[RMDB]
RNA sequence: GGGAACGACUCGAGUAGAGUCGAAAACGAGCGCGCACUAUUUCGGCUUACCUAUCUUCGUGGGUCCGGUUCGAUCCGCGCGGUCAGAAUGUCUCAAUUCGAGUAAUCAAUUGUGCAGUUCUAGCAGUUUCACUCUAAAAUUCGUUUUAGAGUGAAAAAAAGAAACAACAACAACAAC
Reactivity to DMS in 0.01 (KOAc 150mM, MgCl2 10mM, bicine 150mM(pH8.5), 24C), signal-to-noise 9, nucleotides 027 to 126: c140g000a050g010c010g010c010g020c020a100c140u030a100u010u010u000c010g000g000c070u000u010a050c020c020u010a050u010c160u020u030c190g010u010g010g000g000u010c130c130g010g000u010u030c030g000a030u010c170c090g010c010g020c020g010g000u000c030a060g010a110a110u020g000u000c010u000c010a060a040u000u000c040g000a030g000u010a060a130u010c080a080a100u020u010g010u000g010c080a120g000u000u000c010u000a100g010c160a110g000
Reactivity to 2A3 in 0.01 (KOAc 150mM, MgCl2 10mM, bicine 150mM(pH8.5), 24C), signal-to-noise 9, nucleotides 027 to 126: c050g010a010g050c000g000c000g010c010a020c050u140a110u070u070u040c010g010g010c010u030u040a030c000c000u050a070u120c130u190u100c100g030u070g010g000g010u030c060c040g080g000u240u300c030g010a020u020c020c010g000c000g000c000g000g070u010c010a020g050a090a060u120g050u030c000u000c010a010a040u050u030c030g010a010g030u090a040a130u070c080a050a110u120u080g040u050g040c050a040g010u020u010c030u050a060g050c030a030g030